[RMDB]
RNA sequence: GGGAACGACUCGAGUAGAGUCGAAAAGGUGUCAGCAUCAACCGAAAUGGGAAGGGUGGAGUGAGCUGGCUGGGUUGGGUCAGGGAGGUCAGGGCUUGAGUUCAAGACACACUGAGCACAGGGUGCCUGCUAGUGGAGUAUUCGUACUCCACUAGCAAAAAGAAACAACAACAACAAC
Reactivity to DMS in 0.01 (KOAc 150mM, MgCl2 10mM, bicine 150mM(pH8.5), 24C), signal-to-noise 2, nucleotides 027 to 126: g040g010u010g030u020c060a030g020c010a120u000c070a120a130c090c040g010a040a120a130u050g010g000g010a110a080g010g000g020u020g000g000a120g020u000g000a100g010c090u000g000g000c110u000g030g000g000u000u000g030g000g010u000c100a110g000g000g040a140g020g010u000c100a060g010g000g000c050u000u000g000a070g010u000u000c060a020a060g020a040c040a030c050a110c080u000g000a090g040c100a070c070a080g000g000g020u000g010c050c110
Reactivity to 2A3 in 0.01 (KOAc 150mM, MgCl2 10mM, bicine 150mM(pH8.5), 24C), signal-to-noise 1, nucleotides 027 to 126: g060g000u030g010u090c020a020g040c010a090u050c020a040a100c030c010g030a040a130a090u170g020g030g070a050a080g120g060g050u180g010g020a110g080u150g020a020g000c110u020g060g050c090u070g020g110g080u250u140g050g010g000u110c110a070g040g020g000a050g000g190u070c050a010g030g010g000c030u010u060g030a050g030u070u090c020a050a000g060a010c010a020c000a000c090u000g000a000g050c030a010c020a080g110g000g020u060g050c000c010